[RMDB]
RNA sequence: GGGAACGACUCGAGUAGAGUCGAAAAAGUUUAGAUUUCGAUCUAAACUAGACCACUAAGAGGAUGACGAGUGACUACGACGCAUCUAGUAGAAUGCCCCCAGCUGUGAGCAGUUCGCUGCUCACAAUAUAGAUUUCAGUUUCGACUGAAAUCUAUAAAAAGAAACAACAACAACAAC
Reactivity to DMS in 0.01 (KOAc 150mM, MgCl2 10mM, bicine 150mM(pH8.5), 24C), signal-to-noise 6, nucleotides 027 to 126: a030g000u000u000u000a000g010a010u000u000u020c170g010a030u000c000u000a000a010a010c000u000a080g010a210c040c020a120c150u010a070a090g010a110g010g010a050u000g010a120c030g010a240g010u010g010a090c150u000a060c050g000a130c140g000c020a020u000c020u010a090g010u000a040g010a080a100u010g010c020c020c000c030c040a130g000c180u000g010u000g000a010g010c000a010g010u000u010c210g010c010u000g000c000u000c010a000c010a020a060
Reactivity to 2A3 in 0.01 (KOAc 150mM, MgCl2 10mM, bicine 150mM(pH8.5), 24C), signal-to-noise 1, nucleotides 027 to 126: a000g000u000u010u000a020g000a010u060u060u070c240g070a010u000c000u000a000a000a000c000u000a000g050a040c000c000a020c040u080a060a050g090a060g230g000a030u060g060a080c030g010a010g050u080g080a080c090u070a030c200g140a030c040g020c020a000u010c030u030a030g040u040a040g100a300a120u180g090c000c000c000c040c000a030g010c040u050g020u000g000a010g030c000a000g000u000u110c130g000c060u000g000c010u000c000a000c000a010a000